This 177-nucleotide RNA was probed chemically with DMS and 2A3. The DMS profile rests on 2,016 reads. The data come from the RNA Mapping Database (RMDB), library RFM100. Conditions: 150 mM KOAc, 10 mM MgCl2 and 150 mM bicine (pH 8.5), 24 C. DMS (dimethyl sulfate) methylates the pairing face of unpaired adenines and cytosines.

RNA sequence: GGGAACGACUCGAGUAGAGUCGAAAAGGGGGCCUUUCCAGAAAAUGUUGCAAAAAAGCUAAGCCGGCGGGCAGAGGAAAACGCCUGUAGCCGGCGAGUGAAGACGAACCAUCGACUGCCGUGUUCCCUCAAUCAGUUCCUUCGGGAACUGAUUGAGAAAAGAAACAACAACAACAAC
Reactivity to DMS in 0.01 (KOAc 150mM, MgCl2 10mM, bicine 150mM(pH8.5), 24C), signal-to-noise 2, nucleotides 027 to 126: g000g000g030g000g000c030c050u000u010u020c030c060a100g020a110a100a100a070u030g010u030u060g010c060a010a050a130a090a060a170g000c080u000a080a110g020c030c020g000g000c000g010g000g020c000a040g010a220g000g040a190a110a150a120c140g030c040c000u000g030u040a300g000c000c010g000g010c000g010a030g000u000g000a020a070g000a090c080g000a110a050c070c020a110u010c040g030a080c010u000g000c020c000g000u030g010u000u010c010c010
Reactivity to 2A3 in 0.01 (KOAc 150mM, MgCl2 10mM, bicine 150mM(pH8.5), 24C), signal-to-noise 2, nucleotides 027 to 126: g010g000g000g050g000c020c000u080u020u000c040c010a030g130a010a130a000a030u170g010u100u020g080c040a000a120a000a070a200a080g020c030u080a070a020g000c000c000g000g020c000g030g110g000c020a030g060a180g020g150a060a250a010a010c050g040c010c020u130g000u060a020g000c010c010g020g000c000g000a010g010u070g000a000a030g050a020c070g010a050a020c010c000a020u050c000g010a000c010u020g000c010c020g060u010g040u030u030c000c000